Chemical mapping of a 177-nucleotide RNA with 2A3. The 2A3 profile rests on 1,407 reads. The reactions ran in a buffer of 150 mM KOAc, 10 mM MgCl2 and 150 mM bicine (pH 8.5), at 24 C. For 2A3 the reverse transcriptase was SuperScript II with manganese.

[RMDB]
RNA sequence: GGGAACGACUCGAGUAGAGUCGAAAAGAGCCCCCUUCGCAUCAGCCAGUUUCGCAGCCGGGGCCAACGGGUGGUGCGCCCAAGUGCAGCGAGGCGGCGCUGCGCGGCUUCGGCCCGCAGGGCGGCGCCCCGACGGUGCAUUCGUGCACCGUCGGGGAAAAGAAACAACAACAACAAC
Reactivity to 2A3 in 0.01 (KOAc 150mM, MgCl2 10mM, bicine 150mM(pH8.5), 24C), signal-to-noise 2, nucleotides 027 to 126: g150a010g040c010c000c000c000c000u100u070c100g040c020a070u060c040a030g050c010c010a080g010u000u040u110c000g010c020a000g030c000c010g030g040g000g000c000c000a050a010c060g070g050g020u210g080g040u050g070c060g000c000c000c000a160a110g070u180g040c020a030g020c010g010a030g020g000c010g010g040c040g000c020u000g030c060g000c070g000g000c000u010u020c050g050g000c000c000c000g000c050a010g000g010g040c030g010g000c020g060